[RMDB]
RNA sequence: GGGAACGACUCGAGUAGAGUCGAAAAAAUCUUUGUCUUUCCUGGUAGAGCAGGAAGGAGGUACACCUUCGUAAACUUAUAUCCUGCUUUUUGGCAAAUAGAGGGAGGGCAGAGUGCUUUUCUAGUACCGUGUACCUAUUUGCUUCUUCCUAAUUGCUACACGUGAGAUAUUCGUAUCUCACGUGUAAAAAGAAACAACAACAACAAC
Reactivity to DMS in 0.01 (KOAc 150mM, MgCl2 10mM, bicine 150mM(pH8.5), 24C), signal-to-noise 1, nucleotides 027 to 156: a160a100u010c010u010u010u000g010u000c040u000u000u000c030c010u010g020g040u010a090g030a070g050c010a030g020g010a030a100g030g010a080g030g030u000a050c060a010c070c070u000u020c110g010u000a030a060a060c100u010u000a100u010a150u000c000c020u030g020c010u000u030u000u000u030g040g020c000a070a130a150u000a090g010a140g000g020g010a000g020g010g040c050a040g000a030g010u000g000c120u030u000u010u030c130u000a070g000u000a090c020c070g020u000g010u010a040c020c010u000a150u010u000u000g030c000u000u000c040u090u000c000c030u000a060a150u010u010g000c030
Reactivity to 2A3 in 0.01 (KOAc 150mM, MgCl2 10mM, bicine 150mM(pH8.5), 24C), signal-to-noise 4, nucleotides 027 to 156: a010a040u070c030u050u010u030g030u010c010u030u030u020c000c000u030g130g050u130a030g000a010g040c000a000g020g020a030a030g010g030a010g000g010u070a030c060a100c040c030u120u130c070g090u100a010a120a080c060u180u060a100u040a050u260c000c010u010g000c000u040u030u020u060u080g050g000c010a020a000a030u060a100g130a070g010g010g010a010g020g000g020c000a000g000a010g000u040g010c000u060u140u070u030c070u080a040g030u030a100c040c050g050u040g020u060a030c000c010u020a150u050u040u050g010c000u090u160c000u040u050c020c000u100a140a150u170u140g020c010